RNA sequence: GGGAACGACUCGAGUAGAGUCGAAAAGAUAUGGAUCCGAAGUCUUCGAUAAGCGUAUCGGAAACGAUGACGCUUUUGACGAAGCCGAGGAUCCUAAGUCAAACUAGUCGUGUUCGCACGACUAGAAUCAAGUGAGGUCCUUCGGGACCUCACUUGAAAAAGAAACAACAACAACAAC
Reactivity to DMS in 0.01 (KOAc 150mM, MgCl2 10mM, bicine 150mM(pH8.5), 24C), signal-to-noise 1, nucleotides 027 to 126: g000a020u000a300u000g010g000a010u000c010c000g020a180a080g020u020c030u000u000c000g050a120u000a000a010g010c010g090u010a010u000c000g000g020a190a100a290c000g030a000u000g000a030c000g000c020u000u000u000u020g000a180c100g000a030a030g000c010c040g000a300g000g000a000u000c000c000u010a000a070g010u000c050a100a130a200c020u000a000g010u000c000g030u000g000u000u000c300g000c000a010c020g040a030c000u000a000g000a080a120